[RMDB]
RNA sequence: GGGAACGACUCGAGUAGAGUCGAAAACAGUUCAAAGGGAAUGUCUGCCAUGCUUUCACUUUAGAGGCAAUAAUUGACAUAUCUGCAUAUAACGAGCGAACAGUCAAAGGCGUUCCGGCAUGGCUGCCAACCGACGUUUCUUCGGAAACGUCGGUUGAAAAGAAACAACAACAACAAC
Reactivity to DMS in 0.01 (KOAc 150mM, MgCl2 10mM, bicine 150mM(pH8.5), 24C), signal-to-noise 1, nucleotides 027 to 126: c020a170g030u050u070c020a130a030a100g000g040g000a020a000u000g010u000c000u000g020c240c020a060u000g000c000u000u000u000c150a170c110u020u000u080a080g000a090g030g030c100a150a100u000a110a220u000u010g000a000c160a020u000a050u000c020u020g040c020a100u010a200u000a020a190c300g020a050g000c020g000a100a020c110a050g000u040c050a050a020a050g020g000c000g090u000u000c000c000g020g000c060a090u000g000g060c020u000g000c160
Reactivity to 2A3 in 0.01 (KOAc 150mM, MgCl2 10mM, bicine 150mM(pH8.5), 24C), signal-to-noise 2, nucleotides 027 to 126: c090a000g060u300u260c130a160a050a010g090g000g040a050a070u040g030u000c010u020g010c020c000a100u090g000c030u100u240u040c030a090c130u040u140u170a060g040a060g000g000c030a090a050u140a140a040u000u030g000a000c020a000u140a070u040c050u180g020c070a000u240a000u080a220a090c090g020a070g010c000g000a000a000c030a060g000u000c000a070a000a000g060g000c030g050u080u000c000c000g010g030c050a000u020g010g000c000u070g000c020
This 177-nucleotide RNA was probed chemically with DMS and 2A3. DMS adducts were read by reverse transcription with MarathonRT. The DMS profile rests on 1,077 reads. Reactivities are given for positions 27 through 126. The RNA was probed in 150 mM KOAc, 10 mM MgCl2 and 150 mM bicine (pH 8.5) at 24 C. The data come from the RNA Mapping Database (RMDB), library OK1LIB.